[RMDB]
RNA sequence: GGGAACGACUCGAGUAGAGUCGAAAAGAAGUGGCAGGGACAUGCCCCAAAAGCUCGUUCUAGCAACAUAUGUUUGGCUAGUUCGAGCGAUUAGUCUUGAGGAGCGUCCUCUCGCCUGUUGACGAGACAUUAGCUAGGCUUUCGAGCCUAGCUAAUGAAAAGAAACAACAACAACAAC
Reactivity to DMS in 0.01 (KOAc 150mM, MgCl2 10mM, bicine 150mM(pH8.5), 24C), signal-to-noise 3, nucleotides 027 to 126: g010a120a090g020u010g010g000c060a080g010g000g000a060c060a120u020g030c010c010c000c060a020a070a190a240g000c000u000c000g020u000u000c000u000a000g010c010a080a010c010a220u030a070u040g000u000u000u010g040g020c000u000a010g000u000u000c000g020a000g010c010g000a040u040u030a090g010u020c100u020u010g030a130g020g000a170g000c070g000u000c000c030u030c050u020c100g010c000c000u000g010u000u020g040a210c000g000a090g000a160
Reactivity to 2A3 in 0.01 (KOAc 150mM, MgCl2 10mM, bicine 150mM(pH8.5), 24C), signal-to-noise 5, nucleotides 027 to 126: g160a100a010g090u080g040g020c040a020g010g010g030a040c060a080u260g010c010c000c000c000a000a060a000a050g000c000u000c010g000u000u010c000u000a000g030c000a030a090c020a080u240a110u300g170u060u120u110g160g020c000u010a000g000u010u000c000g000a000g000c000g000a010u010u080a030g070u000c070u090u070g030a130g020g040a150g000c000g020u030c030c000u080c030u040c090g000c010c010u000g010u020u030g060a070c070g000a020g030a040